[RMDB]
RNA sequence: GGGAACGACUCGAGUAGAGUCGAAAAGAUAUGGAGCGAGCCAUCGAGAUCCUCGGAAACGAGUGAUCCCAGACAGUGGAACUACUCGCUCCUAAGUCAAACCCCCACACGUUCGCGUGUGGGGGAACUAUAAACUCAAGUUCGCUUGAGUUUAUAGAAAAGAAACAACAACAACAAC
Reactivity to 2A3 in 0.01 (KOAc 150mM, MgCl2 10mM, bicine 150mM(pH8.5), 24C), signal-to-noise 5, nucleotides 027 to 126: g010a000u070a030u150g000g000a000g000c000g000a000g010c020c010a060u170c060g030a030g000a120u020c000c000u000c000g020g020a060a040a040c010g010a000g040u300g010a000u030c000c000c020a140g060a180c070a050g030u020g010g060a080a060c080u180a050c000u300c000g020c000u000c000c000u010a020a000g020u010c010a020a040a300c000c000c010c030c000a000c000a000c000g050u090u100c290g030c010g150u020g010u000g010g020g000g000g000a000a000
Reactivity to DMS in 0.01 (KOAc 150mM, MgCl2 10mM, bicine 150mM(pH8.5), 24C), signal-to-noise 5, nucleotides 027 to 126: g010a040u010a300u010g000g000a020g020c010g000a000g000c010c010a040u000c060g000a030g000a000u000c000c000u000c000g010g010a100a130a150c000g000a010g010u010g010a010u000c000c030c010a110g030a090c300a120g010u000g000g000a070a040c030u010a300c010u000c010g010c000u000c000c000u000a010a070g010u000c030a070a110a200c000c010c000c000c000a000c000a000c000g020u000u010c200g030c010g030u000g030u000g000g010g010g000g000a000a010